Conditions: 150 mM KOAc, 10 mM MgCl2 and 150 mM bicine (pH 8.5), 24 C. The record gives the reactivity of an RNA of 177 nucleotides to DMS and 2A3. Values cover nucleotides 27 to 126. It was measured as part of the RMDB library TTRDEL.
RNA sequence: GGGAACGACUCGAGUAGAGUCGAAAAGAUAUGGACUACCCACCGCUACUGUUCCGAGCCCUAUGUCGGAAACGACAUAGAGCUCAUGUAGCGAGGUCCUAAGUCAAAAGCAUCCUUCGGGAUGCAAGGUAAUGAUUUUGUUCGCAAAAUCAUUACCAAAAGAAACAACAACAACAAC
Reactivity to DMS in 0.01 (KOAc 150mM, MgCl2 10mM, bicine 150mM(pH8.5), 24C), signal-to-noise 5, nucleotides 027 to 126: g010a080u000a220u010g010g010a010c010u000a100c030c010c020a300c100c010g000c000u000a000c010u000g010u000u000c250c150g000a010g000c000c010c010u000a000u000g000u000c000g010g000a070a080a110c000g010a010c000a000u000a000g000a030g010c000u000c000a010u000g010u000a010g010c000g010a080g010g000u000c000c000u000a090a120g010u010c080a120a070a140a100g000c000a000u000c010c000u000u010c180g050g000g010a010u000g010c000a010a010
Reactivity to 2A3 in 0.01 (KOAc 150mM, MgCl2 10mM, bicine 150mM(pH8.5), 24C), signal-to-noise 4, nucleotides 027 to 126: g020a010u130a090u170g010g000a020c020u160a210c020c020c010a010c030c000g000c020u000a010c010u050g220u300u220c130c150g000a010g010c010c010c000u010a010u000g010u000c000g080g000a150a080a040c010g010a000c000a000u010a000g000a000g000c000u000c000a010u020g000u000a000g000c010g020a010g000g010u000c000c000u040a290a070g120u140c070a000a010a050a100g000c000a000u010c000c000u050u120c280g080g000g000a000u040g000c010a000a010
For DMS the reverse transcriptase was MarathonRT.
For 2A3 the reverse transcriptase was SuperScript II with manganese.